[RMDB]
Record summary:
This 177-nucleotide RNA was probed chemically with DMS and 2A3. The DMS profile rests on 3,714 reads. Reactivities are given for positions 27 through 126. The reactions ran in a buffer of 150 mM KOAc, 10 mM MgCl2 and 150 mM bicine (pH 8.5), at 24 C.
RNA sequence: GGGAACGACUCGAGUAGAGUCGAAAAGAGAGAAAUACCGCGCGAAAACAGAGAAAGGACUGUAAGGACGCGAAAUCCUUUCCGUCAAUUACCGCAAGAAAGAGCGAUGUGUGACGAAUAGAGAGAGCCAGGACUAUGGAUUCGUCCAUAGUCCUGGAAAAGAAACAACAACAACAAC
Reactivity to DMS in 0.01 (KOAc 150mM, MgCl2 10mM, bicine 150mM(pH8.5), 24C), signal-to-noise 3, nucleotides 027 to 126: g000a140g000a090g010a080a040a050u010a070c060c050g030c070g000c020g010a150a090a080a010c030a020g000a060g020a020a070a060g000g030a150c030u000g000u000a080a090g000g000a120c010g010c050g010a060a050a160u000c000c000u000u000u010c030c010g010u000c020a050a130u030u070a030c080c030g000c050a020a050g020a070a090a110g000a050g000c000g000a100u040g020u010g030u000g000a000c000g010a080a090u010a060g000a060g000a090g000a110g020
Reactivity to 2A3 in 0.01 (KOAc 150mM, MgCl2 10mM, bicine 150mM(pH8.5), 24C), signal-to-noise 3, nucleotides 027 to 126: g120a010g030a000g020a000a120a030u110a030c010c010g010c020g010c030g110a060a070a060a050c050a020g040a000g040a090a030a010g030g010a010c000u010g000u090a040a070g130g070a030c040g010c020g040a070a040a010u000c000c000u010u010u010c010c000g000u010c000a000a010u090u090a110c010c010g000c050a110a070g080a190a090a000g130a050g020c020g040a050u090g060u010g020u000g050a030c030g030a010a010u150a050g100a010g020a000g000a000g090